The data come from the RNA Mapping Database (RMDB), library OK1LIB.
Chemical mapping of a 177-nucleotide RNA with 2A3 and DMS.
The RNA was probed in 150 mM KOAc, 10 mM MgCl2 and 150 mM bicine (pH 8.5) at 24 C.
The DMS profile rests on 1,688 reads.
[RMDB]
RNA sequence: GGGAACGACUCGAGUAGAGUCGAAAAACGGGCAGUGGCGAUGGCAACGCGGCAGCCGCAGGGUCGACUUCUUCGCAGCCGCAACAGACGGGCCACGGGCAAAGAGGGGCGCUCGUUCUGUUGGAAGCUGAGUAGCUGGUUUCGACCAGCUACUCAGAAAAGAAACAACAACAACAAC
Reactivity to 2A3 in 0.01 (KOAc 150mM, MgCl2 10mM, bicine 150mM(pH8.5), 24C), signal-to-noise 3, nucleotides 027 to 126: a000c040g010g030g030c020a030g010u060g060g010c060g050a160u050g040g050c020a050a080c040g000c040g070g000c000a010g020c050c010g000c020a030g080g000g000u040c030g040a050c030u070u040c010u080u010c060g020c070a040g050c030c020g000c000a000a000c010a000g030a010c030g000g030g000c000c000a020c040g010g020g060c120a120a080a010g080a090g000g020g020g000c080g000c010u010c010g050u180u020c010u010g010u000u020g020g020a030a000g030
Reactivity to DMS in 0.01 (KOAc 150mM, MgCl2 10mM, bicine 150mM(pH8.5), 24C), signal-to-noise 1, nucleotides 027 to 126: a220c170g010g000g050c000a060g040u020g010g000c070g030a130u000g070g030c110a040a040c040g000c080g020g020c080a020g000c060c040g000c090a080g030g000g000u000c020g000a030c060u030u030c000u060u040c040g000c120a080g040c050c000g000c020a010a000c080a030g000a010c060g030g000g030c000c120a130c110g000g000g050c020a030a070a120g000a210g030g000g000g000c090g030c030u000c020g000u000u030c040u000g000u000u000g060g010a030a180g000